[RMDB]
RNA sequence: GGGAACGACUCGAGUAGAGUCGAAAACGGCAUUUCCCCAGCAGCCAUGACCUACCAGGCUGCGGUGCGGCUCGCCGCAGAGGUCAUCCCUCAUCGGGCGCGUCCUGCGUCCUUCCACGCCAACCCAAGACCAUUGCUUCCUUCGGGAAGCAAUGAACUCCCUUAUGAACUUCGGUUCAUAAGGGAGAAAAGAAACAACAACAACAAC
Reactivity to 2A3 in 0.01 (KOAc 150mM, MgCl2 10mM, bicine 150mM(pH8.5), 24C), signal-to-noise 3, nucleotides 027 to 156: c030g030g020c040a020u050u030u090c030c020c000c000a010g010c010a000g010c000c030a160u090g020a150c050c050u110a090c120c100a060g040g000c000u000g000c000g010g000u040g000c050g030g000c030u040c080g060c000c000g020c020a000g000a030g020g040u080c040a120u120c020c020c000u010c020a150u130c060g010g000g000c010g000c000g040u180c050c110u190g000c000g010u000c000c000u050u040c030c010a090c090g000c010c010a020a050c030c000c030a060a020g090a050c030c020a020u000u000g000c010u010u000c020c000u020u050c110g050g000g000a000a000g000c000a000a000u000g000a000a010